[RMDB]
RNA sequence: GGGAACGACUCGAGUAGAGUCGAAAAGUCCGAGUGAAGGGAGACUCCGGAACUCCAGUCAUUUGAGGGACGAAUCCGCCCCCGGGCGCUCCCCUCGGACUUCCUCCAGGAGGGUUCACAUCCCCAAUCCCUCUAAUAUGUUCGCAUAUUAGAGGGAAAAAGAAACAACAACAACAAC
Reactivity to DMS in 0.01 (KOAc 150mM, MgCl2 10mM, bicine 150mM(pH8.5), 24C), signal-to-noise 2, nucleotides 027 to 126: g020u000c000c010g010a020g000u010g010a120a120g020g000g020a020g000a140c060u000c010c020g000g000a140a100c110u000c070c090a040g010u020c130a210u000u010u010g020a110g000g020g000a040c040g000a160a120u000c170c030g000c040c010c120c060c080g000g000g030c160g000c010u000c000c000c000c010u000c030g040g000a000c020u000u000c020c010u020c100c080a110g010g010a060g000g000g000u000u000c170a150c120a160u030c040c000c000c060a060a250